[RMDB]
Source: RMDB library 15KLIB, as collected in RNAgym. Chemical mapping of a 170-nucleotide RNA with 2A3 and DMS. For DMS, 40,987 sequencing reads were counted. The RNA was probed in 150 mM KOAc, 10 mM MgCl2 and 150 mM bicine (pH 8.5) at 24 C.
RNA sequence: GGGAACGACUCGAGUAGAGUCGAAAAUUACCCACGGGAACUGCUGGGUUCCCCUGAUGUCCAGUCCCUCCCCGUUCCUGGAGAAGGGAGACUCGGGAACGCCUAGCAUCUGAGGGACGAAGCCGCCUAAGAAUAACGUUCGCGUUAUUCAAAAGAAACAACAACAACAAC
Reactivity to 2A3 in 0.01 (KOAc 150mM, MgCl2 10mM, bicine 150mM(pH8.5), 24C), signal-to-noise 9, nucleotides 027 to 129: u090u070a190c000c000c000a020c040g000g000g020a050a060c030u070g010c040u080g090g020g000u030u040c000c010c000c010u080g060a090u160g090u040c040c030a020g020u010c010c000c000u010c020c030c000c010g020u050u020c000c020u070g120g030a060g010a060a070g080g010g020a060g030a020c010u000c020g000g010g010a010a010c020g040c000c030u040a030g040c010a040u030c040u060g040a060g010g010g000a010c010g030a030a010g040c030c030g020c010c010u060a120a040
Reactivity to DMS in 0.01 (KOAc 150mM, MgCl2 10mM, bicine 150mM(pH8.5), 24C), signal-to-noise 6, nucleotides 027 to 129: u010u060a070c000c000c040a140c200g050g000g000a060a060c030u000g040c010u020g000g000g040u000u010c070c030c020c070u010g000a110u030g030u050c050c020a150g010u020c010c000c000u010c020c050c050c010g010u000u060c020c020u000g050g030a060g020a100a100g000g000g000a090g000a100c040u000c050g010g010g010a030a050c050g000c080c040u040a060g040c060a080u040c050u000g000a060g020g030g030a060c070g000a090a100g030c020c030g040c010c030u040a080a080